Chemical mapping of a 177-nucleotide RNA with 2A3 and DMS.

RNA sequence: GGGAACGACUCGAGUAGAGUCGAAAAGCUCUGAAAUCGGCAGGCUAGGAUGCAAGUGGCCUUGCUGGGGGGCCCUUCCAAGGGCCGAGGGACCAGCAUCUCGAACGGGCUCGGCGCUCCAGUGACCCUCCUAUCGAGAUUUCGAUCUCGAUAGGAGAAAAGAAACAACAACAACAAC
Reactivity to 2A3 in 0.01 (KOAc 150mM, MgCl2 10mM, bicine 150mM(pH8.5), 24C), signal-to-noise 1, nucleotides 027 to 126: g020c000u000c020u110g070a020a100a170u100c020g010g000c000a010g000g000c000u020a060g050g050a090u090g030c040a120a070g100u050g080g000c010c000u000u070g020c020u010g010g000g000g120g020g000c020c000c000u100u120c050c000a050a050g030g000g000c040c010g010a100g040g030g090a050c000c010a010g000c010a040u040c080u000c090g110a110a080c070g030g010g000c010u010c010g030g000c040g000c030u020c000c020a010g000u030g070a060c000c010
Reactivity to DMS in 0.01 (KOAc 150mM, MgCl2 10mM, bicine 150mM(pH8.5), 24C), signal-to-noise 2, nucleotides 027 to 126: g000c050u000c020u000g000a060a100a170u000c030g000g000c040a030g020g010c010u000a150g010g000a040u020g030c070a110a180g050u010g010g020c000c010u000u010g020c010u010g000g000g030g030g000g010c020c000c020u010u020c270c250a090a060g000g000g050c010c020g000a030g030g030g000a170c020c000a050g000c020a060u000c050u000c080g020a080a100c130g010g020g000c040u010c050g010g010c110g000c030u010c030c000a100g000u000g010a170c100c080

The 2A3 profile rests on 1,391 reads.
For 2A3 the reverse transcriptase was SuperScript II with manganese.
DMS adducts were read by reverse transcription with MarathonRT.